Description: Structure probing data (DMS) for a 177-nucleotide construct. Conditions: 150 mM KOAc, 10 mM MgCl2 and 150 mM bicine (pH 8.5), 24 C.

RNA sequence: GGGAACGACUCGAGUAGAGUCGAAAAGAUAUGGACAUAUACCUGAUAGCCCAGACUUUUGACGAAACACCAUCGGAAACGAUGGAAAUUUCGAUAAGUCUGGCUAUCAGGUAUAUGUCCUAAGUCAGACCUCAGUAAAGUUCGCUUUACUGAGGUCAAAAGAAACAACAACAACAAC
Reactivity to DMS in 0.01 (KOAc 150mM, MgCl2 10mM, bicine 150mM(pH8.5), 24C), signal-to-noise 1, nucleotides 027 to 126: g000a070u000a300u010g000g000a010c000a010u000a010u000a010c000c000u000g010a010u000a030g010c230c020c080a010g010a000c000u000u000u000u000g000a300c250g000a000a020a040c230a300c000c000a020u030c000g000g000a060a160a300c000g010a020u030g000g000a040a040a300u000u000u030c000g020a170u000a010a000g000u000c000u000g000g000c000u000a010u000c000a000g000g000u010a000u000a010u010g000u000c000c000u010a000a030g000u000c100a140